An RNA of 177 nucleotides, treated with DMS and 2A3 and read out base by base. Conditions: 150 mM KOAc, 10 mM MgCl2 and 150 mM bicine (pH 8.5), 24 C. For 2A3 the reverse transcriptase was SuperScript II with manganese.
RNA sequence: GGGAACGACUCGAGUAGAGUCGAAAACGAAGAGCAUUGCUGACAGAGUGGCAUUGCUUACCUAUGGAGUCAUCAACAUGAGCAUGAUGAGUCUGAUGAAGACGCUUGAUCUAUUCGCUCGGGAACGAGGUGUACUGGGCUUCGGCCCAGUACACCUAAAAGAAACAACAACAACAAC
Reactivity to DMS in 0.01 (KOAc 150mM, MgCl2 10mM, bicine 150mM(pH8.5), 24C), signal-to-noise 1, nucleotides 027 to 126: c130g070a290a030g020a040g000c000a070u000u000g000c030u000g000a200c130a260g000a160g020u010g000g000c030a000u020u000g000c030u000u000a050c090c080u000a000u000g010g000a100g000u000c010a030u000c020a010a100c010a120u000g000a140g030c160a020u000g010a020u000g000a100g000u000c030u000g020a020u000g010a050a040g000a040c010g000c090u020u000g020a050u000c030u030a040u000u000c080g050c300u030c060g000g000g020a160a080c140g000
Reactivity to 2A3 in 0.01 (KOAc 150mM, MgCl2 10mM, bicine 150mM(pH8.5), 24C), signal-to-noise 1, nucleotides 027 to 126: c040g100a120a060g030a000g000c010a000u000u030g030c030u020g040a060c050a070g170a060g200u130g050g000c020a010u010u000g010c000u030u030a020c000c010u140a200u230g000g050a010g060u010c020a050u030c010a010a090c000a050u070g120a000g090c050a020u030g000a030u040g010a010g160u050c000u000g050a030u220g070a030a000g050a000c090g000c100u080u130g010a050u010c000u010a070u080u060c020g000c000u030c000g070g030g010a030a080c050g030